This 177-nucleotide RNA was probed chemically with 2A3 and DMS. For 2A3, 367 sequencing reads were counted. For DMS, 1,449 sequencing reads were counted. Values cover nucleotides 27 to 126. 2A3 adducts were read by reverse transcription with SuperScript II with manganese. Source: RMDB library OK1LIB, as collected in RNAgym.

RNA sequence: GGGAACGACUCGAGUAGAGUCGAAAAGGAUGGUUAGUGCAGUCGAGAAUCUAGAUGAGGAGUCCAGAGAAGAGUCUUACAUCGAAUCAGAAUUGAAUCAUCUGGCCCUAUCUGACCACUUGGAGAGUAACCGAGGAGUCUUCGGACUCCUCGGUUAAAAAGAAACAACAACAACAAC
Reactivity to 2A3 in 0.01 (KOAc 150mM, MgCl2 10mM, bicine 150mM(pH8.5), 24C), signal-to-noise 1, nucleotides 027 to 126: g130g080a010u070g000g110u180u030a050g060u070g110c230a010g000u030c000g030a000g040a000a110u030c050u100a110g000a080u100g100a080g050g000a070g040u060c000c000a030g000a000g030a300a000g000a010g180u050c040u030u220a150c050a080u110c030g130a110a040u110c000a090g090a200a010u120u190g030a010a000u020c000a000u000c000u000g000g000c000c000c030u000a000u100c030u060g080a000c040c000a040c080u010u000g030g030a150g010a030g180
Reactivity to DMS in 0.01 (KOAc 150mM, MgCl2 10mM, bicine 150mM(pH8.5), 24C), signal-to-noise 2, nucleotides 027 to 126: g000g000a020u000g010g000u020u000a100g000u010g000c020a150g030u020c030g000a220g000a130a040u010c060u020a040g000a050u010g000a040g060g000a140g010u000c000c000a020g010a190g000a070a050g000a050g010u020c060u020u020a140c070a110u010c050g000a150a150u020c050a140g000a110a070u030u010g010a030a060u000c040a180u000c000u000g000g040c030c010c030u000a020u020c040u000g020a030c080c080a090c070u070u010g000g000a070g020a120g020